[RMDB]
RNA sequence: GGGAACGACUCGAGUAGAGUCGAAAACAUGGAUCUCAUAUCAUGGUCUAUGACUAGACUAGUCUAGCAUGCACAUCACAUGGUACGUACAGGAUCGUCUCCAUGACUGUGGAUCCGCCAUGACUAGGGGAUGUACUGCGUUCGCGCAGUACAUCCCAAAAGAAACAACAACAACAAC
Reactivity to 2A3 in 0.01 (KOAc 150mM, MgCl2 10mM, bicine 150mM(pH8.5), 24C), signal-to-noise 1, nucleotides 027 to 126: c020a070u070g050g010a030u040c040u020c110a030u020a040u120c050a050u090g000g010u000c060u100a100u100g040a110c020u050a060g000a080c020u020a070g050u000c010u010a000g000c030a000u070g060c100a050c000a220u030c010a030c000a120u000g000g040u090a000c030g030u100a040c070a120g080g060a060u100c010g000u000c010u050c090c000a010u020g000a010c060u040g050u030g000g020a000u040c050c030g000c010c010a070u080g010a040c040u110a060g040
Reactivity to DMS in 0.01 (KOAc 150mM, MgCl2 10mM, bicine 150mM(pH8.5), 24C), signal-to-noise 1, nucleotides 027 to 126: c030a070u010g030g000a060u000c020u000c060a100u020a180u000c000a010u000g000g000u000c120u000a070u000g000a080c020u010a030g010a180c030u000a140g000u000c030u000a040g000c000a000u000g000c080a030c200a010u020c220a160c010a010u000g010g030u000a020c190g040u010a110c080a130g030g030a100u030c110g010u020c070u000c060c000a000u000g000a050c160u040g000u030g030g000a050u010c070c060g030c030c030a010u000g010a040c200u030a110g010